[RMDB]
RNA sequence: GGGAACGACUCGAGUAGAGUCGAAAAAGCAUGGUAAGGUACACGGAAAUUGAAGUUUUGGGUCGGCAUGUCUGCUCCCUCUGAUGCCUCUCUUUGGAGGAUAUGAUUUGGAGGCCUGGUUUAGACCCUAUGUGUUUAACUUCGGUUAAACACAUAGAAAAGAAACAACAACAACAAC
Reactivity to DMS in 0.01 (KOAc 150mM, MgCl2 10mM, bicine 150mM(pH8.5), 24C), signal-to-noise 9, nucleotides 027 to 126: a070g010c050a040u010g010g010u010a050a070g000g010u000a040c080a070c070g000g000a050a080a090u010u010g000a090a130g010u000u010u010u010g000g000g010u000c030g010g010c060a050u010g000u010c030u000g010c050u010c060c010c110u010c020u000g010a060u010g000c010c010u000c010u010c220u010u020u030g000g000a030g000g000a050u010a060u020g000a090u010u010u010g000g010a060g000g000c070c050u000g010g010u000u010u010a110g010a070c060c030
Reactivity to 2A3 in 0.01 (KOAc 150mM, MgCl2 10mM, bicine 150mM(pH8.5), 24C), signal-to-noise 9, nucleotides 027 to 126: a010g060c060a040u060g040g030u100a060a060g020g020u070a030c050a010c070g070g080a040a110a070u110u120g060a110a040g070u040u050u110u080g050g000g000u020c020g030g040c040a030u080g050u050c030u040g030c010u040c000c010c010u000c020u020g020a030u120g020c010c000u030c010u030c050u100u140u280g050g000a010g000g010a010u030a040u080g070a060u050u060u110g020g010a010g010g020c000c030u030g010g030u040u060u070a050g030a030c000c000
This 177-nucleotide RNA was probed chemically with DMS and 2A3. Conditions: 150 mM KOAc, 10 mM MgCl2 and 150 mM bicine (pH 8.5), 24 C. DMS adducts were read by reverse transcription with MarathonRT. The data come from the RNA Mapping Database (RMDB), libraries RFM100 and RFMREP. 2A3 adducts were read by reverse transcription with SuperScript II with manganese.